[RMDB]
RNA sequence: GGGAACGACUCGAGUAGAGUCGAAAAGAUAUGGACUUCCGAUUGAUGACCAACGUCGGAAACGACGUGCAGGUCUAAUCAAUCGGAAAGUCCUAAGUCAAAACAGGUGAAGUUCGCUUCACCUGAACUUAGGAUAGCACUUCGGUGCUAUCCUAAGAAAAGAAACAACAACAACAAC
Reactivity to 2A3 in 0.01 (KOAc 150mM, MgCl2 10mM, bicine 150mM(pH8.5), 24C), signal-to-noise 2, nucleotides 027 to 126: g000a010u060a030u070g000g000a010c010u010u000c020c040g020a030u030u040g140a200u300g020a020c030c030a030a000c020g000u010c010g020g020a000a060a000c010g030a000c000g010u050g100c230a070g020g000u010c010u020a020a110u100c020a030a000u020c020g030g000a000a010a000g000u010c000c000u010a000a000g010u010c030a000a020a150a170c010a020g030g000u000g020a000a030g020u060u150c230g050c190u010u010c040a020c000c000u000g000a050a010
Reactivity to DMS in 0.01 (KOAc 150mM, MgCl2 10mM, bicine 150mM(pH8.5), 24C), signal-to-noise 3, nucleotides 027 to 126: g020a020u000a120u010g000g010a010c010u000u000c000c000g010a030u000u000g000a150u020g040a010c000c000a250a020c000g020u000c000g000g000a030a030a090c000g010a020c000g000u000g020c300a110g020g000u000c000u020a100a090u000c010a010a010u000c010g010g000a010a000a010g020u010c010c010u000a000a060g000u010c020a120a070a110a300c020a000g010g000u000g010a020a020g010u010u020c230g000c000u000u010c000a010c010c000u000g000a030a050